[RMDB]
Conditions: 150 mM KOAc, 10 mM MgCl2 and 150 mM bicine (pH 8.5), 24 C.
This 177-nucleotide RNA was probed chemically with DMS and 2A3.
Reactivities are given for positions 27 through 126.
2A3 adducts were read by reverse transcription with SuperScript II with manganese.
For DMS, 1,033 sequencing reads were counted.
The data come from the RNA Mapping Database (RMDB), library M2PK50.

RNA sequence: GGGAACGACUCGAGUAGAGUCGAAAACGACGGGUCUUCGGACCCGUCGAAAUAAUGCGUAGCUCGCGCUACGCAGGCAUCGAGUAGGUCGAGCCACCUACUAAAGCUUCGAGUUCGCUCGAAGCAAGUUGUGUCAAAACUUCGGUUUUGACACAACAAAAGAAACAACAACAACAAC
Reactivity to DMS in 0.01 (KOAc 150mM, MgCl2 10mM, bicine 150mM(pH8.5), 24C), signal-to-noise 2, nucleotides 027 to 126: c030g030a050c020g010g000g000u000c000u000u010c200g070g000a010c000c000c000g000u000c000g000a010a040a040u000a070a070u000g020c000g020u000a010g000c000u000c300g000c300g000c000u020a000c000g020c000a000g010g000c180a160u010c170g010a030g000u000a010g010g020u000c070g010a230g000c040c060a170c000c000u000a010c010u000a020a090a170g010c000u000u000c010g010a000g020u000u010c130g010c000u010c000g000a010a000g000c000a030a010
Reactivity to 2A3 in 0.01 (KOAc 150mM, MgCl2 10mM, bicine 150mM(pH8.5), 24C), signal-to-noise 1, nucleotides 027 to 126: c010g030a010c000g010g050g000u000c040u080u090c220g130g020a000c040c020c000g020u010c000g010a000a000a000u140a010a030u040g000c000g000u060a000g000c010u040c220g030c040g000c050u010a000c000g000c000a000g020g020c000a140u140c080g040a020g050u030a000g050g060u060c050g030a030g010c080c010a010c010c000u000a020c000u030a070a170a020g010c010u010u000c010g010a010g020u000u100c170g090c090u000c010g000a000a000g010c000a010a010